[RMDB]
RNA sequence: GGGAACGACUCGAGUAGAGUCGAAAAUCGUGCUGAUGGCAGGCUGUGGGCUGGCAGGGAAUAAGUGCGUCCCGUUGAAUCCAUAAAGAUGGCCAAUUGGUUGCUCUUGCCUUUGGCCGCAAGCUUGCACAAUAGUGGCAUUCGUGCCACUAUUGUGAAAAGAAACAACAACAACAAC
Reactivity to DMS in 0.01 (KOAc 150mM, MgCl2 10mM, bicine 150mM(pH8.5), 24C), signal-to-noise 6, nucleotides 027 to 126: u010c080g020u010g000c050u010g010a090u010g020g020c020a050g000g000c020u000g030u010g010g000g020c040u020g000g000c080a060g010g010g000a080a060u020a080a070g010u010g010c050g010u000c000c010c010g010u000u010g010a080a100u000c040c050a060u010a090a080a160g010a130u010g010g000c080c010a010a020u010u000g000g010u000u010g020c040u000c050u000u000g010c000c010u010u000u000g010g000c000c010g000c160a060a080g010c080u000u010g000
Reactivity to 2A3 in 0.01 (KOAc 150mM, MgCl2 10mM, bicine 150mM(pH8.5), 24C), signal-to-noise 3, nucleotides 027 to 126: u060c010g040u060g030c030u060g020a140u090g080g000c030a030g040g030c010u030g020u080g070g050g020c030u020g030g050c030a050g020g010g060a080a060u130a210a010g050u020g070c030g040u020c010c000c000g000u010u040g030a040a040u030c000c010a030u110a110a180a030g170a130u130g010g000c010c000a030a040u050u050g020g000u020u060g040c040u030c020u120u060g000c000c000u020u030u020g000g000c000c000g000c000a020a020g030c020u050u070g020